Chemical mapping of a 177-nucleotide RNA with 2A3 and DMS. The DMS profile rests on 1,221 reads. Reactivities are rounded to 0.1 and cut off at 0 and 3. The data come from the RNA Mapping Database (RMDB), library OK1LIB. DMS adducts were read by reverse transcription with MarathonRT.

RNA sequence: GGGAACGACUCGAGUAGAGUCGAAAAUAGGUGGAAGAUAUUCUGUUUUAACAGCAGUAGGAUUAUUACCAAUUGCAACAGCUGGAAUUAACAUCGAAGCUAUGAUGAUUGGUGCUGCAAAAGCACGCUGUGCGUCUCGAUUCGUCGAGACGCACAGAAAAGAAACAACAACAACAAC
Reactivity to 2A3 in 0.01 (KOAc 150mM, MgCl2 10mM, bicine 150mM(pH8.5), 24C), signal-to-noise 2, nucleotides 027 to 126: u220a060g000g010u100g010g030a050a000g080a190u090a090u150u000c000u000g050u010u070u060u100a200a110c160a020g000c000a000g030u090a150g000g150a000u040u130a010u020u080a210c000c050a000a050u100u010g040c030a010a000c000a050g040c010u000g000g110a110a050u060u030a060a190c050a030u110c190g010a020a020g000c000u010a100u070g130a010u160g000a050u050u040g010g030u000g000c000u070g000c050a220a000a000a000g030c000a040c070g000
Reactivity to DMS in 0.01 (KOAc 150mM, MgCl2 10mM, bicine 150mM(pH8.5), 24C), signal-to-noise 1, nucleotides 027 to 126: u040a110g000g050u000g000g000a030a090g040a030u040a070u000u000c000u000g000u000u000u000u010a100a030c260a060g020c060a000g050u000a170g020g040a180u090u040a010u040u010a070c040c000a020a000u000u000g000c260a070a000c010a020g010c010u010g000g000a090a000u060u010a000a140c280a110u070c000g060a160a030g000c090u010a150u040g000a010u030g020a000u020u000g010g000u000g000c050u000g000c110a000a060a030a000g010c120a060c190g040